Record summary:
Structure probing data (DMS and 2A3) for a 207-nucleotide construct. It was measured as part of the RMDB library OK3TST. The reactions ran in a buffer of 150 mM KOAc, 10 mM MgCl2 and 150 mM bicine (pH 8.5), at 24 C.
RNA sequence: GGGAACGACUCGAGUAGAGUCGAAAAUGGAAGUGAAGGAACAGAAAAACAGGUAAAGGCCUCCUGGUCUAGAGACGACAAUAGAGUUAUUGAAGAUCCUAUGAUUCAACUUAUACCAGAGAAGCUAAGAAGAGAGCUAGAAAGACUUGGUUUAUCACGAGUAUAUGAACUUCGGUUCAUAUACUCGAAAAGAAACAACAACAACAAC
Reactivity to DMS in 0.01 (KOAc 150mM, MgCl2 10mM, bicine 150mM(pH8.5), 24C), signal-to-noise 2, nucleotides 027 to 156: u000g000g000a090a070g010u010g030a080a040g020g020a060a190c050a140g010a080a050a050a090a090c070a050g020g020u010a050a050a140g030g010c050c030u020c050c010u010g010g010u010c070u010a070g010a150g020a050c200g020a070c110a030a100u000a060g000a090g030u000u000a110u010u010g000a100a190g020a040u000c040c040u010a040u010g000a160u010u010c030a050a220c000u020u000a130u010a080c030c050a140g000a060g020a050a040g010c040u020a010a120g000a080a100g000a070g000a070g020c040u000a030g000a090a070a060g000a070c080u010u000g030g000u000u000u020a080u000c070a280
Reactivity to 2A3 in 0.01 (KOAc 150mM, MgCl2 10mM, bicine 150mM(pH8.5), 24C), signal-to-noise 5, nucleotides 027 to 156: u090g010g000a000a010g030u030g020a030a030g020g020a050a030c040a070g110a080a100a010a000a010c040a030g010g030u090a130a060a080g030g010c010c010u040c020c030u040g000g000u010c010u010a050g010a000g010a080c070g020a000c040a030a030u080a070g090a030g080u120u060a110u080u150g030a090a030g030a060u050c020c020u080a070u170g040a070u070u070c010a020a060c030u070u100a050u050a160c030c020a010g010a000g000a110a000g010c010u020a030a000g010a050a000g010a010g000a000g010c010u040a020g090a050a070a010g020a020c040u070u090g040g040u090u120u140a110u110c100a010